This 207-nucleotide RNA was probed chemically with 2A3 and DMS. Conditions: 150 mM KOAc, 10 mM MgCl2 and 150 mM bicine (pH 8.5), 24 C. Source: RMDB library RSTRND, as collected in RNAgym. The 2A3 profile rests on 1,785 reads.
RNA sequence: GGGAACGACUCGAGUAGAGUCGAAAAGAAAGGACAUGGUGGCCAGGUUAAUUGCCUCGGGUACGGUCACAACGUGAAGGAUGUUCCAAUGGGCAAUCCGCAGCCAAGCCCCUACGUGUAGUGUCUGUAAUACUACAGACAUUUCAUAUGGGGAAGGGAAGCUUUCAUAGUUCGCUAUGAAAGCUUCAAAAGAAACAACAACAACAAC
Reactivity to 2A3 in 0.01 (KOAc 150mM, MgCl2 10mM, bicine 150mM(pH8.5), 24C), signal-to-noise 3, nucleotides 027 to 156: g030a030a060a020g080g040a030c060a080u110g060g000u040g030g040c030c030a040g060g010u090u150a110a030u080u140g030c000c020u060c100g040g000g020u050a040c060g010g030u030c030a020c020a090a070c150g020u050g040a030a070g060g000a050u120g040u080u060c000c040a050a100u230g000g010g020c020a000a060u000c020c010g020c030a000g020c000c000a030a040g020c000c010c000c010u020a030c060g020u000g010u030a020g000u000g010u000c000u000g000u010a150a120u120a290c130u010a000c000a010g000a010c000a000u020u020u010c000a010u010a070u130g000g000g040g030a020a000g020g030
Reactivity to DMS in 0.01 (KOAc 150mM, MgCl2 10mM, bicine 150mM(pH8.5), 24C), signal-to-noise 1, nucleotides 027 to 156: g020a100a050a190g020g030a080c030a060u000g000g010u000g010g040c030c040a130g020g030u000u000a060a050u000u010g020c050c010u060c070g000g010g000u000a030c080g000g010u010c020a060c000a040a060c130g000u010g020a060a090g000g000a140u000g000u000u000c030c040a130a160u000g000g000g000c010a100a040u000c030c050g000c000a150g020c030c030a040a120g010c080c000c010c020u000a040c050g050u000g010u010a030g010u010g000u010c000u010g010u000a060a200u000a170c220u000a030c010a010g000a010c010a010u020u010u000c010a010u010a080u000g020g000g000g010a080a020g030g010